About this RNA
Structure probing data (DMS and 2A3) for a 177-nucleotide construct. The DMS profile rests on 2,498 reads. Reactivities are rounded to 0.1 and cut off at 0 and 3.
RNA sequence: GGGAACGACUCGAGUAGAGUCGAAAAGGGCAUUCUUCUCGCGGUAAAUCUGCUUGAAUACCCGUUUGAGUACGGGCAGCAGGUUCUGAAAGAACUCGAUGUUUUCGGCGUCGAUGCCGGCAUAAUCCUACACCAAGAUCUUCGGAUCUUGGUGUAGAAAAGAAACAACAACAACAAC
Reactivity to DMS in 0.01 (KOAc 150mM, MgCl2 10mM, bicine 150mM(pH8.5), 24C), signal-to-noise 3, nucleotides 027 to 126: g000g000g000c040a060u000u000c080u000u000c020u000c250g020c060g020g000u000a070a030a020u000c010u010g010c000u000u000g030a160a150u010a190c000c000c000g010u000u010u010g020a220g000u030a010c010g000g020g000c070a020g000c020a000g000g010u000u010c050u010g010a050a090a080g000a020a050c210u010c060g000a050u000g010u010u000u000u010c110g010g010c040g000u000c110g000a060u000g020c010c000g000g010c140a050u010a050a100u000c050
Reactivity to 2A3 in 0.01 (KOAc 150mM, MgCl2 10mM, bicine 150mM(pH8.5), 24C), signal-to-noise 2, nucleotides 027 to 126: g010g000g000c020a050u100u010c020u050u020c000u010c040g050c050g000g030u060a000a050a030u030c000u000g010c010u060u090g060a070a030u090a140c020c030c010g040u020u050u100g170a160g200u060a010c010g000g000g010c000a000g060c010a010g000g000u010u000c010u040g080a080a080a060g040a020a010c010u010c050g030a010u040g090u050u010u090u140c110g080g000c030g020u080c050g030a050u150g000c000c000g000g030c000a030u120a060a040u040c000
Overview: The data come from the RNA Mapping Database (RMDB), library OK2TST.